Background
This 207-nucleotide RNA was probed chemically with 2A3 and DMS. For 2A3, 3,979 sequencing reads were counted. Values are in units of 0.01, from 0 to 300, in steps of 10. The reactions ran in a buffer of 150 mM KOAc, 10 mM MgCl2 and 150 mM bicine (pH 8.5), at 24 C. Reactivities are given for positions 27 through 156.
RNA sequence: GGGAACGACUCGAGUAGAGUCGAAAAUCCUAAGUCACUCCUUGGAUUUAUGGUUAAGUUGGUAGGCAAGGCGUUCGGAAACGAACGCUGAUGACCCUACCAUCAGUAACCAUUGUCAGGAGUGAUAUGGAAAAAGUUGGACUAUUCGUAGUCCAACGUAUUUGUGGCACUUCGGUGCCACAAAUACAAAAGAAACAACAACAACAAC
Reactivity to 2A3 in 0.01 (KOAc 150mM, MgCl2 10mM, bicine 150mM(pH8.5), 24C), signal-to-noise 4, nucleotides 027 to 156: u000c000c000u020a120a030g020u000c000a000c010u010c000c010u060u190g230g010a090u290u300u140a020u100g020g000u020u020a070a060g010u010u010g010g000u000a010g000g010c120a080a100g000g000c010g020u000u000c010g030g060a090a060a060c010g000a000a000c000g000c010u000g020a080u040g010a020c010c000c000u010a000c000c000a000u010c010a000g020u000a000a010c000c010a000u000u010g010u000c010a000g000g000a000g000u010g000a000u000a050u040g010g020a050a090a050a060a050g010u000u000g000g000a000c000u000a020u090u130c300g070u090a000g000u000c000c000a000a000c000
Reactivity to DMS in 0.01 (KOAc 150mM, MgCl2 10mM, bicine 150mM(pH8.5), 24C), signal-to-noise 1, nucleotides 027 to 156: u000c000c020u000a060a190g000u000c000a010c020u010c000c050u000u000g050g010a060u010u010u000a000u040g000g000u000u000a080a140g030u010u000g010g060u020a000g000g000c010a070a080g000g010c000g140u010u000c000g030g020a110a150a300c010g030a010a020c010g070c000u000g010a030u010g010a080c300c000c000u000a010c010c000a000u000c000a140g080u000a030a020c000c000a010u000u010g010u010c010a060g000g000a050g040u000g000a000u000a050u000g010g000a120a050a110a090a140g050u000u040g010g000a040c010u000a100u020u000c250g020u000a000g020u000c000c010a000a010c020